[RMDB]
RNA sequence: GGGAACGACUCGAGUAGAGUCGAAAAACAUAGGUAGGGCCAUAGGCGCUGCGGUUCAUCAUCUUGCCCUCGCCAGGACCGCUCCCGUUCUACUACUUGGCGUCGCGGAUACCGGGUUGGAAAACAAGUCAAUAGUGCGAUUCGUCGCACUAUUGACAAAAGAAACAACAACAACAAC
Reactivity to DMS in 0.01 (KOAc 150mM, MgCl2 10mM, bicine 150mM(pH8.5), 24C), signal-to-noise 1, nucleotides 027 to 126: a060c080a210u010a050g010g010u010a050g010g010g000c020c010a120u000a150g000g010c000g090c120u010g060c030g030g020u000u010c040a120u020c150a090u000c090u010u000g020c010c020c010u010c080g010c010c040a110g000g000a140c000c010g000c040u010c010c020c050g000u020u000c060u000a070c100u020a040c060u020u010g000g010c040g020u000c030g030c150g000g060a160u000a110c020c010g000g000g010u000u000g000g000a090a020a050a090c180a110a080
This 177-nucleotide RNA was probed chemically with DMS. DMS adducts were read by reverse transcription with MarathonRT. Source: RMDB library M2PK90, as collected in RNAgym. The DMS profile rests on 751 reads. Values cover nucleotides 27 to 126.